[RMDB]
RNA sequence: GGGAACGACUCGAGUAGAGUCGAAAACUGUCGACUGCGGUCAACGCGAUCGCCUGAUCUGAGGUUGACGUGGUCACCGAGCCGCUCACAAAGCCGGCGCUAGUGGCGGUCGACAUGCGCCCCGCGCACACGGGACGUAAUUCGUUACGUCCCGUGUAAAAGAAACAACAACAACAAC
Reactivity to 2A3 in 0.01 (KOAc 150mM, MgCl2 10mM, bicine 150mM(pH8.5), 24C), signal-to-noise 4, nucleotides 027 to 126: c010u010g000u010c010g010a010c020u030g020c050g130g080u020c020a030a030c040g050c020g140a170u010c020g110c150c110u240g050a160u030c060u180g110a060g200g010u080u130g020a010c010g030u060g040g020u070c030a010c020c000g010a020g010c010c000g000c030u090c070a130c060a090a110a060g060c140c120g070g020c040g030c120u160a030g030u020g100g000c030g000g000u010c000g000a010c010a020u070g000c020g040c020c020c030c040g050c020g010c030
Reactivity to DMS in 0.01 (KOAc 150mM, MgCl2 10mM, bicine 150mM(pH8.5), 24C), signal-to-noise 4, nucleotides 027 to 126: c090u010g000u000c020g010a020c010u000g020c050g020g000u010c020a040a020c010g010c040g000a020u000c010g010c220c220u010g020a050u010c050u010g050a090g020g000u000u000g000a020c020g010u010g030g030u000c030a030c060c090g000a210g000c010c010g020c030u000c070a080c280a100a090a070g010c110c050g010g000c020g020c060u010a100g020u000g010g010c020g010g000u000c010g000a010c010a000u010g010c070g000c060c020c030c090g020c130g020c130
An RNA of 177 nucleotides, treated with 2A3 and DMS and read out base by base. For DMS, 4,610 sequencing reads were counted. In probing experiments dimethyl sulfate is read out at A N1 and C N3, which are open when not base-paired. Reactivities are given for positions 27 through 126. For 2A3, 5,353 sequencing reads were counted. Source: RMDB library OK2TRN, as collected in RNAgym. 2A3 adducts were read by reverse transcription with SuperScript II with manganese. The reactions ran in a buffer of 150 mM KOAc, 10 mM MgCl2 and 150 mM bicine (pH 8.5), at 24 C.